The record gives the reactivity of an RNA of 207 nucleotides to 2A3 and DMS. The RNA was probed in 150 mM KOAc, 10 mM MgCl2 and 150 mM bicine (pH 8.5) at 24 C. The DMS profile rests on 3,440 reads. Source: RMDB library OK3TST, as collected in RNAgym. Reactivities are rounded to 0.1 and cut off at 0 and 3.

[RMDB]
RNA sequence: GGGAACGACUCGAGUAGAGUCGAAAACUUUAACUACUUGCAUAGAUAGGUAAUUACAGUGAUGCCUACAUGCCGUUUUUUGAAACUGAAUAGAUGCGUCUAAAAGCGAUGCUACGCUAGUCACAAUCACCACUUUCAUAUUUAGAAUAUAUAUGUAUCACUCUAUCUUUUUCGAAAGAUAGAGUGAAAAAGAAACAACAACAACAAC
Reactivity to 2A3 in 0.01 (KOAc 150mM, MgCl2 10mM, bicine 150mM(pH8.5), 24C), signal-to-noise 4, nucleotides 027 to 156: c020u080u090u150a070a030c040u060a010c030u080u110g000c010a030u030a110g150a130u010a010g040g010u080a100a130u120u130a110c080a100g080u050g110a060u090g000c000c000u010a010c010a000u030g020c030c030g070u000u000u010u030u080u140g080a070a050a020c030u050g040a040a030u060a110g050a070u070g010c030g020u000c030u040a150a070a040a020g030c050g020a010u050g000c030u020a030c070g010c020u000a020g050u060c020a010c030a080a090u100c030a030c080c000a040c050u070u200u110c040a030u090a120u120u180u170a080g020a100a010u160a000u020a010u000a010u300g010u000a060
Reactivity to DMS in 0.01 (KOAc 150mM, MgCl2 10mM, bicine 150mM(pH8.5), 24C), signal-to-noise 2, nucleotides 027 to 156: c060u000u000u000a060a060c010u000a020c030u010u000g010c090a200u010a140g010a150u000a010g000g040u000a020a080u000u000a070c040a180g030u010g010a070u010g000c030c030u000a060c040a110u010g030c080c020g010u010u000u010u000u000u010g000a080a030a090c050u010g000a060a120u010a080g010a080u000g020c050g100u000c030u000a030a040a070a060g020c020g010a110u000g010c060u000a040c040g000c020u010a060g000u000c060a070c060a020a110u010c030a110c020c020a060c040u000u000u010c010a080u000a070u030u000u000a150g020a160a120u000a130u000a140u010a040u020g000u000a200